[RMDB]
RNA sequence: GGGAACGACUCGAGUAGAGUCGAAAAAGUUAAUAAGUAGCACUGACCACAAACAUAUCAAAGGAAGCAACAAGCUUAUUAAAAACUUGCUCCUCGCAAGUUGGGAGUAUGAACAUAUUCGGAUGGAGAUUAGCGCAUAUUUCGAUAUGCGCUAAUCAAAAGAAACAACAACAACAAC
Reactivity to DMS in 0.01 (KOAc 150mM, MgCl2 10mM, bicine 150mM(pH8.5), 24C), signal-to-noise 2, nucleotides 027 to 126: a120g000u000u000a020a040u010a040a080g030u000a090g000c070a090c050u000g010a090c030c020a150c180a080a090a120c120a050u010a080u000c100a050a100a080g000g010a150a080g030c020a050a050c100a080a100g000c030u000u010a010u000u000a060a040a060a040a060c020u010u000g000c000u020c160c110u000c200g000c090a030a030g000u000u000g020g010g000a050g010u000a020u010g000a070a060c060a080u000a030u000u010c060g010g010a080u000g000g000a300
Reactivity to 2A3 in 0.01 (KOAc 150mM, MgCl2 10mM, bicine 150mM(pH8.5), 24C), signal-to-noise 2, nucleotides 027 to 126: a040g040u090u000a090a040u070a090a000g060u040a010g070c070a000c070u020g070a130c030c000a030c030a030a190a010c060a070u180a020u250c100a000a110a110g030g000a070a000g040c040a010a080c010a140a030g000c020u020u010a030u060u120a230a180a000a020a000c010u000u010g000c010u000c090c000u010c070g120c040a070a060g090u060u080g000g060g000a010g000u040a080u210g080a020a020c000a100u160a160u220u160c060g090g080a040u030g020g040a080
This 177-nucleotide RNA was probed chemically with DMS and 2A3. For DMS, 1,495 sequencing reads were counted. Values cover nucleotides 27 to 126.